[RMDB]
RNA sequence: GGGAACGACUCGAGUAGAGUCGAAAAUUCUGUUGGGAACUUUAAACAGGGGUAUCAACAGAACAAACUGGUCUACCCGAUUUCUUCAGGGGAGACCGGAAAAAUUUUAACCCCGACAAACCCACAAGACAGGCGUGGAUUUCGAUCCACGCUUGUCAAAAGAAACAACAACAACAAC
Reactivity to DMS in 0.01 (KOAc 150mM, MgCl2 10mM, bicine 150mM(pH8.5), 24C), signal-to-noise 3, nucleotides 027 to 126: u020u010c000u000g010u000u010g000g010g030a160a100c060u000u000u000a080a050a160c210a160g000g000g000g010u030a110u010c020a010a000c020a000g000a010a050c150a070a120a090c000u000g000g010u000c000u010a030c000c000c000g000a080u040u060u060c110u000u040c110a110g020g010g020g000a020g000a000c000c000g000g000a000a000a060a150a080u030u020u010u020a100a110c040c020c000c060g010a110c200a100a080a110c000c000c000a100c100a090a100
Reactivity to 2A3 in 0.01 (KOAc 150mM, MgCl2 10mM, bicine 150mM(pH8.5), 24C), signal-to-noise 2, nucleotides 027 to 126: u000u000c000u000g000u000u010g000g000g000a010a020c030u080u070u100a130a070a010c080a030g000g000g010g000u030a020u040c000a000a010c020a010g020a020a000c010a010a050a000c000u010g010g000u000c000u000a040c000c000c010g000a050u060u090u080c110u060u090c100a070g000g000g000g000a030g010a000c000c000g010g000a000a000a000a000a000u020u020u000u030a040a040c000c000c010c000g020a010c030a000a090a000c000c000c010a040c010a070a040